[RMDB]
RNA sequence: GGGAACGACUCGAGUAGAGUCGAAAAUGAAACAUUUACCAAAGGGGAAGGAUCAUAUUUAGAAGAAGACUCAGAUGAGGAACGUUUGGAAGGAAGUUUGAGUUCAUUUCAGUAUGGUGAUUUGCAAAGCACUACAGUACCUCAGCAAACCCCUGCAAUUUAAUGAUUUAUUCGUAAAUCAUUAAAUAAAAGAAACAACAACAACAAC
Reactivity to 2A3 in 0.01 (KOAc 150mM, MgCl2 10mM, bicine 150mM(pH8.5), 24C), signal-to-noise 3, nucleotides 027 to 156: u090g010a030a120a000c060a110u080u130u220a080c020c010a060a040a040g040g010g010g020a050a030g040g010a040u040c020a030u080a090u190u260u210a070g010a040a010g020a020a000g020a030c020u000c040a020g020a090u050g010a050g050g040a060a030c050g070u080u120u060g070g040a060a050g010g030a040a020g000u010u050u050g010a000g000u020u080c020a060u040u070u070c020a020g020u030a030u050g010g030u030g030a070u010u000u030g000c010a020a080a070g040c010a020c040u070a020c050a010g010u060a050c020c000u020c020a020g000c020a030a070a140c010c020c020c000u020g010c010a020
Reactivity to DMS in 0.01 (KOAc 150mM, MgCl2 10mM, bicine 150mM(pH8.5), 24C), signal-to-noise 4, nucleotides 027 to 156: u000g020a180a100a070c050a100u000u000u000a220c040c010a060a090a090g020g010g010g000a130a130g000g010a080u000c050a060u000a050u010u000u000a100g010a060a090g010a110a130g000a060c030u000c030a060g020a120u000g010a070g010g010a070a060c050g000u000u010u000g020g010a090a100g000g020a090a220g020u000u000u010g010a070g030u000u000c050a200u000u010u000c040a080g020u000a030u010g020g010u000g000a090u000u000u010g010c020a110a060a060g020c030a060c030u010a060c090a140g020u000a040c020c020u000c070a100g000c000a030a070a100c020c000c010c020u000g010c070a100